[RMDB]
RNA sequence: GGGAACGACUCGAGUAGAGUCGAAAAUUGGAGUGGGCCUUGAGCCUUGGGACUGACCUCGCCCCCGGCUCACGUAGGCAUCCUGGAAAUUGAUUCCCCCAAGUCCUUGGUGGGGGAGCCGGACUUGGUUGCUCACUCUGUUCGCAGAGUGAGCAACAAAAGAAACAACAACAACAAC
Reactivity to DMS in 0.01 (KOAc 150mM, MgCl2 10mM, bicine 150mM(pH8.5), 24C), signal-to-noise 1, nucleotides 027 to 126: u010u000g030g030a150g010u010g030g030g020c020c010u000u000g000a010g010c000c010u000u000g010g000g010a010c030u000g000a130c140c090u000c110g010c010c020c010c040c300g010g020c010u000c000a100c300g030u010a020g020g020c030a060u000c070c020u020g000g000a070a010a020u010u000g020a300u000u000c030c010c000c030c010a010a040g010u000c000c010u000u020g030g010u010g020g030g010g010g000a110g000c030c050g000g000a010c020u000u000g020
This 177-nucleotide RNA was probed chemically with DMS. The data come from the RNA Mapping Database (RMDB), library OK2TRN. The RNA was probed in 150 mM KOAc, 10 mM MgCl2 and 150 mM bicine (pH 8.5) at 24 C.